[RMDB]
RNA sequence: GGGAACGACUCGAGUAGAGUCGAAAACGAGGCCAAGUGGAUCGAGAUGGAUAAGAUGGGAUAUCGUUCUUUCAUGUCUACCUCUCAAGGGGUGCUGCAAGUGAAGAACGCUCUGAACCUUGCACGCACCAUCUUAGCUCUUCGGAGCUAAGAUGGUAAAAGAAACAACAACAACAAC
Reactivity to DMS in 0.01 (KOAc 150mM, MgCl2 10mM, bicine 150mM(pH8.5), 24C), signal-to-noise 9, nucleotides 027 to 126: c120g010a090g000g010c030c040a080a090g020u000g010g000a070u000c100g010a080g010a060u000g010g000a080u000a060a080g010a070u010g000g010g010a070u000a090u010c080g010u000u000c020u000u000u010c050a090u000g010u000c090u010a060c030c020u000c020u010c200a110a140g010g010g000g020u000g010c110u000g000c040a030a040g010u010g010a110a040g010a030a090c160g010c160u000c030u000g010a090a100c280c010u000u000g010c050a040c180g010c100
Reactivity to 2A3 in 0.01 (KOAc 150mM, MgCl2 10mM, bicine 150mM(pH8.5), 24C), signal-to-noise 9, nucleotides 027 to 126: c020g020a030g060g000c030c020a090a050g060u050g070g020a060u060c060g010a010g010a120u090g050g020a050u060a130a090g050a060u090g040g000g020a030u040a030u200c050g030u040u020c010u050u100u040c020a040u070g040u010c020u040a040c010c010u030c020u040c080a110a140g030g000g000g000u020g020c040u030g000c030a060a040g020u030g090a010a020g000a050a040c070g040c070u010c010u030g030a040a030c010c000u010u040g010c050a030c100g030c010